Background: Conditions: 150 mM KOAc, 10 mM MgCl2 and 150 mM bicine (pH 8.5), 24 C. Structure probing data (DMS and 2A3) for a 177-nucleotide construct. For 2A3 the reverse transcriptase was SuperScript II with manganese. It was measured as part of the RMDB library TTRDES. The 2A3 profile rests on 2,450 reads. Reactivities are given for positions 27 through 126. The DMS profile rests on 1,127 reads.
[RMDB]
RNA sequence: GGGAACGACUCGAGUAGAGUCGAAAAGAUAUGGAUGGUUAUACUCCGAUAAGCUCUGUAUCGGAAACGAUAUUGAGCUUUUGACGGAGUAACCAUCCUAAGUCAAAUCGCCAGUUCGCUGGCGAAAGAGAGUGUAGCUGUUCGCAGCUACACUCUCAAAAGAAACAACAACAACAAC
Reactivity to DMS in 0.01 (KOAc 150mM, MgCl2 10mM, bicine 150mM(pH8.5), 24C), signal-to-noise 1, nucleotides 027 to 126: g000a050u000a210u010g000g000a040u000g000g000u000u010a220u000a130c010u000c000c000g000a080u000a000a020g030c000u010c000u000g010u000a010u000c000g010g000a080a040a150c000g000a000u000a020u000u000g010a010g010c000u000u000u010u010g010a240c100g030g000a000g030u000a010a050c000c000a060u020c010c000u010a020a070g000u000c030a060a080a190u000c030g000c000c000a020g020u000u010c300g000c010u000g000g000c010g010a000a060a160
Reactivity to 2A3 in 0.01 (KOAc 150mM, MgCl2 10mM, bicine 150mM(pH8.5), 24C), signal-to-noise 1, nucleotides 027 to 126: g020a020u020a020u090g000g000a010u000g020g010u110u050a110u060a300c000u010c000c090g060a110u080a290a000g030c000u030c030u000g020u000a010u000c010g000g000a010a070a000c000g000a020u010a010u000u030g010a010g000c040u020u010u010u040g060a030c040g000g020a020g040u010a000a000c000c010a000u000c000c000u000a020a000g000u000c030a000a000a250u050c000g060c010c010a020g000u040u050c300g090c150u000g020g010c000g010a010a050a030